[RMDB]
RNA sequence: GGGAACGACUCGAGUAGAGUCGAAAAAAGUUCAGGAAGGGAUUGAGGUGAAAGUCCUCCUCCCGAAUCGUUCAUGGGAGAGUCUAUCCAGACUUGCGUAGCGAGUAAUCGCUAGGUGAGAAGCUCUGGAGACAAUGUACCUGCCCUUCAAUUGGAGGCAAUACAUAAGGUUCGCCUUAUGUAUUGCAAAAGAAACAACAACAACAAC
Reactivity to 2A3 in 0.01 (KOAc 150mM, MgCl2 10mM, bicine 150mM(pH8.5), 24C), signal-to-noise 3, nucleotides 027 to 156: a000a000g080u090u040c040a050g000g060a000a020g050g000g000a030u070u100g030a050g000g000u020g010a030a010a000g040u000c000c000u000c010c000u020c000c010c000g040a030a060u150c080g070u190u120c110a120u200g010g000g000a030g000a010g010u010c030u040a100u020c010c000a000g000a010c000u030u050g020c200g120u010a000g000c000g000a010g030u200a100a150u030c010g000c000u000a010g050g030u030g030a100g040a050a020g030c030u010c010u010g000g020a010g000a010c000a010a080u120g020u100a030c000c010u030g010c000c010c000u070u040c030a040a090u080u100g110g010a030g090
Reactivity to DMS in 0.01 (KOAc 150mM, MgCl2 10mM, bicine 150mM(pH8.5), 24C), signal-to-noise 2, nucleotides 027 to 156: a030a070g050u000u000c020a060g000g030a070a020g030g010g000a100u000u000g000a060g000g010u060g000a110a120a230g010u000c010c010u000c040c020u000c000c000c000g000a040a060u000c070g030u000u010c080a140u000g020g020g000a030g020a140g000u000c040u000a150u010c010c000a010g000a300c000u000u010g010c000g000u000a000g020c010g000a020g000u000a110a160u000c020g020c000u000a000g010g070u000g010a060g000a070a110g040c220u010c010u000g020g010a060g000a070c090a040a090u000g010u000a110c020c000u000g020c020c000c000u000u000c040a080a130u000u000g020g010a120g000